[RMDB]
RNA sequence: GGGAACGACUCGAGUAGAGUCGAAAACGCGAAGCCUUCGUCGAGAUCUCCGCCCUCGCAGAGGCUUUGCAGGAACAUCCAGGCCAGUUCGGCUUGCGGGUCGUCGAACGGCGUCAUCACAUCGCCAUGGUUCAGGAUUAUUCGUAAUCCUGAACCAAAAAGAAACAACAACAACAAC
Reactivity to 2A3 in 0.01 (KOAc 150mM, MgCl2 10mM, bicine 150mM(pH8.5), 24C), signal-to-noise 4, nucleotides 027 to 126: c090g000c000g000a010a010g000c010c010u080u120c070g210u140c030g010a010g010a090u070c060u020c070c020g040c020c000c000u000c000g010c020a040g000a010g030g000c010u010u000u000g000c000a000g020g020a060a050c040a060u060c040c020a030g070g030c000c020a040g050u070u080c020g020g000c000u000u040g010c020g020g000g000u020c000g000u010c030g050a080a030c050g010g020c010g050u030c020a110u150c020a030c010a100u090c040g000c030c010a050
Reactivity to DMS in 0.01 (KOAc 150mM, MgCl2 10mM, bicine 150mM(pH8.5), 24C), signal-to-noise 3, nucleotides 027 to 126: c160g000c010g000a010a000g000c000c000u010u000c080g020u050c020g000a010g000a170u030c030u020c070c030g030c030c160c000u010c000g010c020a160g000a000g000g020c000u000u000u000g000c030a090g000g000a120a090c100a110u000c050c050a070g010g000c030c000a190g020u000u010c050g040g010c000u000u010g010c010g000g010g010u000c020g000u010c010g020a110a150c080g010g000c030g000u000c090a060u030c100a080c160a050u030c020g020c010c020a150